[RMDB]
RNA sequence: GGGAACGACUCGAGUAGAGUCGAAAAUAAAAGGACAACGAAAUGCGCCUCUGCAACCUCCAGCUGGUGUUGUCUGGGAUCCUGAUCAAAACUACCGAGUUUGAUCAGGCCAAUGCAGAGAAAAAAACAUGUGAAGACGAUUCGUCGUCUUCACAUGAAAAGAAACAACAACAACAAC
Reactivity to DMS in 0.01 (KOAc 150mM, MgCl2 10mM, bicine 150mM(pH8.5), 24C), signal-to-noise 2, nucleotides 027 to 126: u010a100a070a070a100g040g000a020c020a000a020c020g020a060a080a120u010g030c070g020c130c020u000c010u000g010c020a060a100c050c020u000c040c040a090g010c080u000g010g030u010g010u000u000g010u000c010u010g010g010g000a080u010c010c000u000g000a000u000c000a030a010a020a030c020u030a190c250c220g000a060g020u000u000u000g000a010u000c000a010g010g000c030c060a010a070u000g030c010a010g000a090g020a010a020a040a020a030a040a070
Reactivity to 2A3 in 0.01 (KOAc 150mM, MgCl2 10mM, bicine 150mM(pH8.5), 24C), signal-to-noise 2, nucleotides 027 to 126: u090a010a040a000a010g040g020a000c010a080a000c040g040a060a050a070u090g040c040g030c040c000u000c000u010g040c000a040a130c010c020u010c090c020a060g020c040u070g060g060u070g050u050u040g030u020c000u020g000g020g020a030u120c000c000u020g000a010u000c030a050a040a030a090c010u090a150c050c150g090a090g110u000u010u000g010a000u000c000a000g000g000c020c000a000a010u070g040c010a010g000a000g030a120a000a010a010a000a000a000